About this RNA
The data come from the RNA Mapping Database (RMDB), library OK3TST. Structure probing data (DMS and 2A3) for a 207-nucleotide construct. The DMS profile rests on 4,979 reads. For 2A3 the reverse transcriptase was SuperScript II with manganese. DMS adducts were read by reverse transcription with MarathonRT. 2A3 is a SHAPE reagent: it acylates the 2'-hydroxyl of flexible nucleotides of all four kinds.

RNA sequence: GGGAACGACUCGAGUAGAGUCGAAAAAGGAACUCAUGGAACGGUUCUAAUUGGGGUAGUCAGUCCAUAUUGUCAUCAUUGAUGAUUAUGUCACCUGAUGGAAUAUCCACACCAGGGAUUUACGUCAGAAAAGAACAUAGCGAUAAUGGUUAUGCUGCCUAGACAUAGCAUUCGUGCUAUGUCUAGGAAAAGAAACAACAACAACAAC
Reactivity to DMS in 0.01 (KOAc 150mM, MgCl2 10mM, bicine 150mM(pH8.5), 24C), signal-to-noise 3, nucleotides 027 to 156: a160g000g000a060a050c000u000c040a140u000g010g010a080a130c060g010g030u000u000c010u000a070a220u000u000g000g020g010g000u000a050g040u000c070a110g000u000c050c030a110u000a070u000u010g000u010c020a070u000c040a140u000u000g030a070u000g010a070u000u000a040u000g010u020c040a090c050c020u000g000a020u010g000g010a050a070u000a090u000c010c070a100c040a130c140c050a140g000g010g010a080u010u000u000a040c060g020u000c020a110g010a130a090a050a110g000a070a110c020a000u000a040g030c000g020a140u000a070a060u020g020g000u000u000a060u000g010c040u000g010
Reactivity to 2A3 in 0.01 (KOAc 150mM, MgCl2 10mM, bicine 150mM(pH8.5), 24C), signal-to-noise 6, nucleotides 027 to 156: a000g050g000a020a010c020u030c080a070u110g040g050a080a040c060g000g020u030u040c030u040a050a050u110u070g010g010g000g020u020a030g050u020c040a030g050u010c020c010a010u040a080u080u150g050u030c020a020u010c040a080u030u200g030a030u030g010a030u040u110a020u080g040u040c020a030c080c010u000g000a010u010g000g040a120a020u060a020u070c010c010a060c030a060c100c050a080g080g010g000a000u000u020u070a050c020g000u000c010a010g050a050a100a010a020g020a030a010c010a030u030a030g040c020g070a030u080a170a020u130g050g020u050u040a040u110g050c030u040g010